[RMDB]
About this RNA
Chemical mapping of a 207-nucleotide RNA with 2A3 and DMS. The 2A3 profile rests on 4,883 reads. Reactivities are given for positions 27 through 156. It was measured as part of the RMDB library OK3TST. For DMS the reverse transcriptase was MarathonRT.
RNA sequence: GGGAACGACUCGAGUAGAGUCGAAAAUCUGAACCACUAAGUAGAUAAUGAUUAAUGUUAAGGAAGAGGAAAUAUUCAGUAUAUAGAUAUGCCUUAGCAUCAUAUCUUGUACUAAACACGCUAAACAGUUUAUUGAUGUGAUCAAUUUCCAACAGAACUAGCACUCUAAAUUCGUUUAGAGUGCUAGAAAAGAAACAACAACAACAAC
Reactivity to 2A3 in 0.01 (KOAc 150mM, MgCl2 10mM, bicine 150mM(pH8.5), 24C), signal-to-noise 5, nucleotides 027 to 156: u040c020u040g030a030a030c030c000a030c100u070a050a060g080u050a020g090a050u080a190a120u130g050a040u050u150a110a020u060g030u060u040a080a050g040g020a060a070g030a040g080g090a040a100a050u140a060u040u160c010a020g020u010a040u010a000u070a070g020a010u030a020u050g000c000c030u070u060a050g030c030a040u040c000a000u000a000u020c000u030u020g020u000a010c000u010a020a050a030c070a020c090g040c080u060a060a100a040c020a040g030u010u060u040a060u040u090g070a070u090g030u030g020a010u020c020a030a070u020u050u000c020c030a040a030c020a110g070a060a020
Reactivity to DMS in 0.01 (KOAc 150mM, MgCl2 10mM, bicine 150mM(pH8.5), 24C), signal-to-noise 3, nucleotides 027 to 156: u000c030u010g020a130a180c040c010a100c090u000a120a140g020u010a070g020a100u000a080a080u000g010a150u000u000a080a100u010g000u000u000a070a100g000g020a060a080g020a130g020g000a050a110a110u000a030u000u000c010a050g020u000a060u000a060u010a030g020a060u000a030u010g010c130c050u000u000a190g000c130a130u010c000a020u000a000u010c010u020u010g010u000a030c010u000a040a040a060c040a040c040g010c050u000a070a060a070c060a070g010u000u010u000a070u020u000g020a140u000g010u010g020a020u000c040a070a150u000u000u010c020c030a030a090c070a060g010a070a210